[RMDB]
RNA sequence: GGGAACGACUCGAGUAGAGUCGAAAAGACGCCAAACAACCCUGAACUAUCCGCUGCUUGGAGGAGUUUCGCGAGAUCUUGCCCACAUGGGUGCUGCACUCGGCGGAUCGUUUUCGAGUGGCUGCUGCCAGGACCGCGUAUUCGUACGCGGUCCUGGAAAAGAAACAACAACAACAAC
Reactivity to 2A3 in 0.01 (KOAc 150mM, MgCl2 10mM, bicine 150mM(pH8.5), 24C), signal-to-noise 1, nucleotides 027 to 126: g000a000c030g030c020c000a080a040a070c000a130a150c030c000c020u100g230a050a000c000u030a130u040c010c010g000c000u000g020c000u070u170g080g000a000g030g030a050g010u070u160u000c050g000c140g010a050g000a190u020c000u100u060g040c000c000c000a140c060a300u180g020g000g020u020g000c060u040g000c000a040c000u000c020g000g080c000g050g110a060u020c000g020u000u000u020u070c090g000a000g000u050g040g000c020u020g060c030u040g000